[RMDB]
RNA sequence: GGGAACGACUCGAGUAGAGUCGAAAACUUGCUGGCGACUCCCACGAGAAGGCCAGCCAGGAGGGCGAGGUGCCGCAGCGCCAUGCCAGGAGCAGAUGCGCAGAGCCUGCCACAGGGAGGAGCAUGCGAAUCGACCCUUAUUCGUAAGGGUCGAUUCAAAAGAAACAACAACAACAAC
Reactivity to DMS in 0.01 (KOAc 150mM, MgCl2 10mM, bicine 150mM(pH8.5), 24C), signal-to-noise 2, nucleotides 027 to 126: c050u000u010g020c020u010g020g020c010g010a210c030u000c000c020c060a140c150g000a100g030a050a110g050g000c000c010a040g020c020c080a010g020g000a060g020g010g030c040g000a110g000g010u000g000c070c110g000c130a130g000c020g020c040c060a060u010g030c060c070a090g020g000a140g020c040a040g010a080u010g000c090g020c040a050g000a300g000c020c000u010g000c010c040a110c160a110g000g000g000a030g030g000a160g000c090a080u000g010c170
Reactivity to 2A3 in 0.01 (KOAc 150mM, MgCl2 10mM, bicine 150mM(pH8.5), 24C), signal-to-noise 1, nucleotides 027 to 126: c010u000u040g030c020u040g060g010c000g100a110c020u010c030c090c030a050c050g130a110g040a160a060g130g000c000c000a000g000c000c010a030g060g060a070g040g040g000c070g060a050g040g020u050g060c000c060g010c050a030g010c020g000c020c000a040u060g000c020c010a040g080g050a060g050c030a020g040a120u170g000c030g030c030a020g010a040g120c000c010u040g010c020c000a080c050a030g060g000g000a050g030g000a030g000c030a080u110g020c000